[RMDB]
RNA sequence: GGGAACGACUCGAGUAGAGUCGAAAAAACAUCCAGUAAUUCACUGACAUUACGGAAGAAAUGCAGCGCGCCAGCGUGGUCAACGAUGGGUAAAUUAACGGUGAGUUGCUGAAUCAAAAACUCAAUGUCUUAAAGGCUUCUUCGGAAGCCUUUAAGAAAAAGAAACAACAACAACAAC
Reactivity to DMS in 0.01 (KOAc 150mM, MgCl2 10mM, bicine 150mM(pH8.5), 24C), signal-to-noise 1, nucleotides 027 to 126: a100a060c260a060u010c010c000a000g000u000a070a000u000u010c010a000c010u010g000a160c160a030u000u000a040c010g010g040a210a150g050a090a010a030u040g030c010a300g000c100g000c110g050c140c290a050g030c000g000u000g040g010u010c130a030a160c230g010a120u000g000g000g010u000a080a060a100u060u030a140a120c050g050g000u000g000a030g060u000u010g030c010u010g000a010a020u010c130a040a060a070a130a030c060u000c060a080a050u000g000